[RMDB]
Conditions: 150 mM KOAc, 10 mM MgCl2 and 150 mM bicine (pH 8.5), 24 C. The record gives the reactivity of an RNA of 177 nucleotides to 2A3 and DMS. DMS adducts were read by reverse transcription with MarathonRT. It was measured as part of the RMDB library OK2TST. For 2A3 the reverse transcriptase was SuperScript II with manganese.

RNA sequence: GGGAACGACUCGAGUAGAGUCGAAAAGUAGAACCUGAAGAGGUUGGUCCUGAGGUCGUCCUUCAUCCAGUCUAUGAGGCCGAAGAGGAGCACCAGGCUCAUGGCCGCGAUGGCCAGGGCGAGCACCACUUACGAUACACUUCGGUGUAUCGUAAGUAAAAGAAACAACAACAACAAC
Reactivity to 2A3 in 0.01 (KOAc 150mM, MgCl2 10mM, bicine 150mM(pH8.5), 24C), signal-to-noise 3, nucleotides 027 to 126: g050u050a020g020a050a010c010c000u040g080a080a020g080a020g150g030u030u040g050g040u040c010c010u060g060a050g030g090u010c010g010u010c010c030u000u040c000a010u020c000c010a050g040u000c040u060a050u050g010a050g160g130c010c030g050a150a050g070a110g130g090a060g040c060a050c070c020a010g040g000c010u010c020a060u020g000g000c020c010g030c110g030a020u090g000g010c040c030a000g010g010g000c010g000a050g060c010a030c020c030
Reactivity to DMS in 0.01 (KOAc 150mM, MgCl2 10mM, bicine 150mM(pH8.5), 24C), signal-to-noise 5, nucleotides 027 to 126: g010u000a110g000a040a020c030c000u010g010a140a060g010a020g000g010u000u000g010g010u010c020c010u010g000a160g010g020u000c030g000u000c020c010u000u020c020a030u000c020c040a110g000u000c020u010a040u000g010a060g020g010c010c010g000a110a100g010a140g020g020a100g000c070a100c070c060a260g000g010c010u000c010a040u000g010g010c010c050g020c220g000a050u000g010g000c280c160a020g000g020g010c010g010a060g010c050a150c120c070